[RMDB]
RNA sequence: GGGAACGACUCGAGUAGAGUCGAAAAGAUAUGGACAUCGCUUCCUCGCUUGGAUUUAUACAGGAACUGUGGUCGGAAACGACCACUCAGUACUGUAUUGUCAGCGACGAAGCGAUGUCCUAAGUCACUGACAUUUAGUGUUCGCACUAAAUGUCAGAAAAGAAACAACAACAACAAC
Reactivity to DMS in 0.01 (KOAc 150mM, MgCl2 10mM, bicine 150mM(pH8.5), 24C), signal-to-noise 1, nucleotides 027 to 126: g020a010u020a300u000g000g000a000c010a010u000c010g000c000u000u020c000c090u000c000g040c020u020u020g020g020a000u010u030u000a020u000a000c010a060g010g010a180a210c140u040g020u020g000g030u010c000g050g020a160a180a270c000g000a010c000c000a010c000u000c010a070g010u010a140c000u000g000u000a000u000u000g000u010c020a030g000c010g020a000c290g000a030a000g010c000g000a000u000g010u000c000c000u000a000a060g010u000c030a300